[RMDB]
RNA sequence: GGGAACGACUCGAGUAGAGUCGAAAAAAUGUUGAAGACACUUGUCUAGUGAACGCUUGAAAUGAGAGAGAGGGAAAUUUAAAGCAUCUUUCCUUAAGAAAGUGGCCUGAUUUGCAAGGCUGUUUCUUCUUAAAAGGUCCUAUUUUUCAGGGUCAGACAUGACUGGAUUAUUCGUAAUCCAGUCAUGAAAAGAAACAACAACAACAAC
Reactivity to DMS in 0.01 (KOAc 150mM, MgCl2 10mM, bicine 150mM(pH8.5), 24C), signal-to-noise 2, nucleotides 027 to 156: a030a030u000g020u000u000g000a080a070g040a070c010a080c040u000u010g000u000c040u020a080g030u000g000a040a050c090g020c020u000u020g020a100a070a070u010g010a150g020a130g000a100g000a100g020g010g000a070a060a040u000u000u010a050a060a090g020c000a070u010c050u000u000u010c020c040u000u020a070a080g000a040a040a030g020u000g000g030c000c000u010g000a120u000u000u010g010c070a110a140g010g010c000u000g010u020u000u000c000u000u000c030u000u000a050a020a100a160g000g010u000c000c000u010a180u010u000u020u010u000c110a040g030g040g000u000c020a160g020a190
Reactivity to 2A3 in 0.01 (KOAc 150mM, MgCl2 10mM, bicine 150mM(pH8.5), 24C), signal-to-noise 3, nucleotides 027 to 156: a000a010u120g020u090u010g060a090a000g050a060c030a010c060u080u120g020u130c090u060a050g050u040g100a110a030c030g000c040u060u080g050a080a100a060u110g000a100g000a020g000a000g010a010g030g060g040a030a060a000u200u230u130a090a160a010g040c020a040u010c020u030u040u000c000c000u010u030a030a020g020a040a060a050g050u070g020g020c000c000u060g060a150u110u060u120g010c060a070a030g010g010c000u020g000u010u010u020c000u000u000c000u070u110a050a090a030a040g030g010u000c000c020u050a160u120u220u060u100u080c060a010g040g040g010u080c050a010g020a070